[RMDB]
RNA sequence: GGGAACGACUCGAGUAGAGUCGAAAACAACUUAUGUUUUACGGGGCUUACUCUCCUCGGCUGAGAAUGGAGUUGGAGGGCCAGGGGCAAACAGGGAGACCAGCAUGUCAAUCUUAUCUAUUCUAUAACUACAUAAGUAAAUACAUGGCUUUAUAUAGUGAGAGAAUAGUUUCGACUAUUCUCUCACAAAAGAAACAACAACAACAAC
Reactivity to 2A3 in 0.01 (KOAc 150mM, MgCl2 10mM, bicine 150mM(pH8.5), 24C), signal-to-noise 4, nucleotides 027 to 156: c040a040a030c040u180u070a110u230g030u030u020u060u080a040c040g000g030g000g050c020u060u080a040c010u070c010u040c050c010u020c030g060g030c060u080g020a010g050a110a070u110g000g020a030g000u110u090g050g010a050g010g020g010c020c010a020g040g000g000g000c050a050a050a050c050a050g000g040g000a040g020a010c030c000a000g020c020a010u020g020u060c020a050a060u010c040u090u080a050u040c020u100a120u170u070c030u060a140u100a220a110c040u110a040c030a080u120a050a000g020u080a010a090a110u150a020c050a040u110g060g010c000u100u150u120a130u150a020u180a160
Reactivity to DMS in 0.01 (KOAc 150mM, MgCl2 10mM, bicine 150mM(pH8.5), 24C), signal-to-noise 1, nucleotides 027 to 156: c020a070a170c060u000u010a070u000g010u000u000u000u010a060c000g010g050g060g010c100u000u080a040c070u000c030u010c010c050u000c010g040g020c090u010g010a070g040a090a060u000g030g010a100g020u000u000g020g000a150g020g030g020c020c040a180g000g020g010g040c020a050a040a110c060a090g030g040g020a110g020a140c060c050a060g010c050a090u020g010u000c000a020a100u000c000u000u000a040u000c040u000a110u010u010c000u000a120u010a110a070c060u010a090c030a060u000a020a050g000u010a010a060a140u010a070c040a080u010g000g000c030u000u000u000a070u030a120u000a200
Structure probing data (2A3 and DMS) for a 207-nucleotide construct. Reactivities are rounded to 0.1 and cut off at 0 and 3. For 2A3 the reverse transcriptase was SuperScript II with manganese. For DMS, 1,690 sequencing reads were counted. In probing experiments dimethyl sulfate is read out at A N1 and C N3, which are open when not base-paired.